Structure probing data (2A3 and DMS) for a 177-nucleotide construct. It was measured as part of the RMDB library OK2TRN. For DMS the reverse transcriptase was MarathonRT.
RNA sequence: GGGAACGACUCGAGUAGAGUCGAAAAGCGCUGAUGAAAAACAUUGGCUUUAACUCAUUUCGCACGUCAAUUCAGUGGUCGCGUUUGAUUGAGGAUUUUGAAACGGGUAAACCGAACGAUGAUGCGGAGCAUUGGAUUGAUUCGUCAAUCCAAUGCUAAAAGAAACAACAACAACAAC
Reactivity to 2A3 in 0.01 (KOAc 150mM, MgCl2 10mM, bicine 150mM(pH8.5), 24C), signal-to-noise 7, nucleotides 027 to 126: g090c070g000c030u030g000a010u010g100a090a110a050a070a040c000a000u010u000g000g000c000u070u090u060a100a060c020u020c060a080u070u160u080c010g010c010a010c000g010u010c020a130a280u110u010c010a040g030u030g050g040u030c040g020c020g260u020u010u050g110a080u030u080g110a150g250g070a160u070u060u070u180g100a030a010a000c010g050g030g050u040a060a050a000c010c010g000a020a000c020g010a000u040g010a080u020g010c000g020g010
Reactivity to DMS in 0.01 (KOAc 150mM, MgCl2 10mM, bicine 150mM(pH8.5), 24C), signal-to-noise 9, nucleotides 027 to 126: g010c250g010c030u000g020a010u010g000a090a130a110a160a170c020a020u000u000g000g010c010u000u000u010a100a140c040u000c040a150u010u010u010c030g020c030a030c020g020u000c020a070a170u000u000c020a030g000u000g000g010u000c020g000c030g010u000u000u000g000a050u000u000g010a160g020g000a140u000u000u010u000g000a020a020a040c030g000g010g020u000a190a100a080c010c000g000a020a040c220g000a030u000g000a080u000g010c010g020g010